[RMDB]
RNA sequence: GGGAACGACUCGAGUAGAGUCGAAAAGAUAUGGACCCUGUGUGGAGAGUGGGUCGGAAACGACCUUCGUUGAAACACUGGGUCCUAAGUCAAAAGACUUGGAUCAAGUUCGCUUGAUCCAAGUCAAGGUAGUAUUAUCCUUCGGGAUAAUACUACCAAAAGAAACAACAACAACAAC
Reactivity to 2A3 in 0.01 (KOAc 150mM, MgCl2 10mM, bicine 150mM(pH8.5), 24C), signal-to-noise 2, nucleotides 027 to 126: g010a010u050a020u110g000g000a000c000c000c010u000g000u000g000u010g030g070a070g000a000g070u010g010g010g010u010c010g020g010a020a040a010c010g010a000c000c010u000u020c120g240u050u040g010a050a010a000c010a000c000u000g000g010g000u000c000c000u010a010a000g000u000c010a010a000a020a100g000a000c000u000u000g000g010a000u000c000a010a020g000u060u110c300g080c160u010u000g000a000u010c010c000a000a000g000u000c000a010a000
Reactivity to DMS in 0.01 (KOAc 150mM, MgCl2 10mM, bicine 150mM(pH8.5), 24C), signal-to-noise 5, nucleotides 027 to 126: g000a030u000a250u000g000g000a010c000c000c000u000g010u010g020u000g000g010a300g000a030g020u000g000g000g000u000c000g010g010a040a050a140c010g020a000c000c000u000u000c000g030u010u000g010a300a170a020c000a000c010u000g000g000g000u000c000c000u000a010a050g000u010c030a110a100a110a160g000a010c000u000u000g000g000a000u000c000a010a000g000u010u010c260g000c000u010u000g000a010u000c000c000a000a010g000u000c000a020a020